[RMDB]
The record gives the reactivity of an RNA of 177 nucleotides to DMS and 2A3. For DMS the reverse transcriptase was MarathonRT.
RNA sequence: GGGAACGACUCGAGUAGAGUCGAAAAAGGCCGGUGCGGUCGCCGCGGUGCUGGUCCAGCGGCGUUCUGGUAUCUCGACUCGACUGUGAUCGCGGGGUCGGGCCCCUGGUGAUCGUGGAACGGCUCACGUAUCCAAUACUUUCGAGUAUUGGAUACGAAAAGAAACAACAACAACAAC
Reactivity to DMS in 0.01 (KOAc 150mM, MgCl2 10mM, bicine 150mM(pH8.5), 24C), signal-to-noise 5, nucleotides 027 to 126: a120g000g010c000c010g020g020u000g010c000g010g020u000c020g020c000c010g020c300g010g020u010g030c020u000g010g000u000c010c010a080g020c040g020g010c070g010u000u010c020u000g010g010u000a040u010c140u010c050g010a040c030u000c060g010a050c040u010g020u000g000a060u010c040g020c030g020g010g010g010u000c010g010g010g010c020c000c000c030u010g030g010u000g000a020u000c010g020u000g020g020a090a090c020g000g000c020u000c120a130
Reactivity to 2A3 in 0.01 (KOAc 150mM, MgCl2 10mM, bicine 150mM(pH8.5), 24C), signal-to-noise 5, nucleotides 027 to 126: a000g050g000c040c020g050g130u300g020c020g020g020u020c010g010c000c010g000c040g010g030u170g150c050u070g020g030u030c010c010a080g130c050g180g000c030g020u050u010c030u040g020g040u050a110u070c140u030c100g070a050c020u020c040g030a030c050u120g050u130g150a140u090c020g000c010g020g010g010g030u030c000g010g020g010c000c000c000c030u090g000g000u000g010a020u010c010g010u040g040g030a190a080c000g000g030c040u050c030a070